[RMDB]
RNA sequence: GGGAACGACUCGAGUAGAGUCGAAAAGCCUGGGGUCUUAGGACUCCGCUGCCGCCGCGAAGAGCUCGCCUCUGUCAGCCGCGGGGCGCCGGGGGCUGGGGCCAGGCCGGGCGAGCGCCGCGAGGACAGGAAUGGAACUGGUCCCCGUGUUUGGUGUACUACUAACCAUGUUCGCAUGGUUAGUAGUAAAAGAAACAACAACAACAAC
Reactivity to 2A3 in 0.01 (KOAc 150mM, MgCl2 10mM, bicine 150mM(pH8.5), 24C), signal-to-noise 1, nucleotides 027 to 156: g070c010c000u020g000g000g000g020u010c020u090u110a060g080g020a130c000u030c010c010g020c000u070g060c000c080g150c050c000g000c000g030a100a030g040a000g040c050u100c140g060c070c000u140c040u130g160u150c080a040g060c040c000g000c000g000g020g000g000c010g000c020c040g060g000g000g000g000c010u000g000g000g000g030c000c060a050g070g050c000c000g030g000g010c000g020a050g000c100g030c020c040g000c050g070a050g030g050a010c000a060g070g000a050a050u160g000g070a080a060c020u010g040g040u020c010c000c000c010g080u090g030u050u110u110g100g020u060g040u030
This 207-nucleotide RNA was probed chemically with 2A3. The 2A3 profile rests on 832 reads. 2A3 adducts were read by reverse transcription with SuperScript II with manganese.